[RMDB]
RNA sequence: GGGAACGACUCGAGUAGAGUCGAAAACACUCCUCCUCACUAUUUUACUCUUGGAUGCAAAAUUUUAACGCUCACCCCACGCAACAAGUGGAGUGGCGUUUCUGACUUGUCCCUCAAACAAAAACUCCCCCCCAACUGUUCGCAGUUGGGAAAAGAAACAACAACAACAAC
Reactivity to 2A3 in 0.01 (KOAc 150mM, MgCl2 10mM, bicine 150mM(pH8.5), 24C), signal-to-noise 9, nucleotides 027 to 129: c040a020c010u010c000c000u020c010c000u030c010a080c040u090a140u090u140u060u180a090c040u030c020u080u100g040g030a040u060g030c050a030a080a110a150u050u100u070u100a040a020c020g010c030u110c110a020c000c020c020c000a000c000g060c010a050a240c050a300a030g020u000g000g000a010g000u000g020g000c000g000u000u010u000c020u020g080a050c020u030u090g040u070c010c010c000u070c030a100a100a080c050a030a070a040a030a030c030u050c000c000c000c000
Reactivity to DMS in 0.01 (KOAc 150mM, MgCl2 10mM, bicine 150mM(pH8.5), 24C), signal-to-noise 6, nucleotides 027 to 129: c100a180c110u020c020c030u020c030c030u010c030a100c110u050a080u020u060u040u060a110c060u020c040u050u020g000g000a070u070g050c040a050a010a090a170u080u050u040u050a000a000c030g020c030u000c040a050c020c030c010c000a030c000g040c150a130a110c270a230a120g020u030g070g010a060g030u000g000g000c010g050u000u000u000c080u030g050a110c110u000u000g030u050c000c010c000u030c090a050a050a060c070a030a070a020a000a110c130u040c040c030c010c090